[RMDB]
RNA sequence: GGGAACGACUCGAGUAGAGUCGAAAAGGUCACUGGUUCGCCAGUGACCAAAGGCGGGAGAGAGAGAAGCCACUCACCCAAAGGACUCAGCGAAGCACCCAAAAACUACCUGGUUCGCCAGGUAGAAGAUAAUACAGAGCUUCGGCUCUGUAUUAUCAAAAGAAACAACAACAACAAC
Reactivity to DMS in 0.01 (KOAc 150mM, MgCl2 10mM, bicine 150mM(pH8.5), 24C), signal-to-noise 2, nucleotides 027 to 126: g010g010u000c000a000c000u000g000g010u000u000c230g030c000c000a000g010u000g000a000c000c000a020a030a080g000g010c280g000g010g010a130g010a060g010a100g000a140g000a070a090g000c060c060a090c030u010c010a060c020c020c030a060a120a120g000g000a050c000u000c000a120g020c040g010a040a050g000c060a190c010c010c030a050a060a090a140a140c000u000a000c000c000u000g000g030u000u000c280g030c000c000a010g000g010u010a010g000a070a080
Reactivity to 2A3 in 0.01 (KOAc 150mM, MgCl2 10mM, bicine 150mM(pH8.5), 24C), signal-to-noise 2, nucleotides 027 to 126: g010g000u000c010a000c010u010g000g040u020u060c090g060c060c000a000g010u000g000a000c000c000a000a000a010g010g010c040g030g020g000a090g010a010g000a010g000a000g030a190a050g030c040c000a020c010u020c010a070c000c000c010a070a050a010g080g000a000c000u000c050a030g030c040g040a050a010g000c030a060c000c000c020a020a110a050a020a030c000u010a010c000c000u010g000g040u030u050c140g060c090c000a000g010g020u010a000g000a000a000
An RNA of 177 nucleotides, treated with DMS and 2A3 and read out base by base.
For 2A3 the reverse transcriptase was SuperScript II with manganese.
The 2A3 profile rests on 3,842 reads.
The reactions ran in a buffer of 150 mM KOAc, 10 mM MgCl2 and 150 mM bicine (pH 8.5), at 24 C.